An RNA of 177 nucleotides, treated with 2A3 and DMS and read out base by base. Conditions: 150 mM KOAc, 10 mM MgCl2 and 150 mM bicine (pH 8.5), 24 C. Reactivities are given for positions 27 through 126.
RNA sequence: GGGAACGACUCGAGUAGAGUCGAAAAGAUAUGGAAUCACGCGAGAGCUUUUGACGGUCCUUCGGAAACGAAGACCGAUAAGCUCUCGAUUCCUAAGUCAAAACAGGAGUAGUUCGCUACUCCUGAACCAUGUAAUACUCUUCGGAGUAUUACAUGGAAAAGAAACAACAACAACAAC
Reactivity to 2A3 in 0.01 (KOAc 150mM, MgCl2 10mM, bicine 150mM(pH8.5), 24C), signal-to-noise 9, nucleotides 027 to 126: g020a020u070a030u150g020g020a020a010u030c040a040c270g290c210g060a010g000a000g020c020u130u190u240u300g250a140c020g010g020u190c080c050u010u000c010g020g020a040a050a020c010g000a010a000g000a010c000c010g010a010u010a020a010g000c000u000c000u010c000g000a000u000u000c000c000u010a130a010g060u040c050a010a010a140a180c010a010g000g010a010g000u010a000g020u050u120c300g020c180u000a000c000u000c000c000u000g000a010a010
Reactivity to DMS in 0.01 (KOAc 150mM, MgCl2 10mM, bicine 150mM(pH8.5), 24C), signal-to-noise 9, nucleotides 027 to 126: g010a030u010a300u010g000g000a020a000u000c030a160c250g050c220g000a010g000a010g010c000u000u000u000u010g010a170c130g000g000u000c150c070u000u000c000g020g010a080a070a160c000g010a020a020g000a020c000c000g020a040u000a010a020g000c000u000c000u000c000g000a010u000u000c000c000u000a050a120g010u000c030a090a050a100a190c010a010g000g010a010g010u000a010g010u000u010c210g010c000u000a000c000u000c000c000u000g000a030a120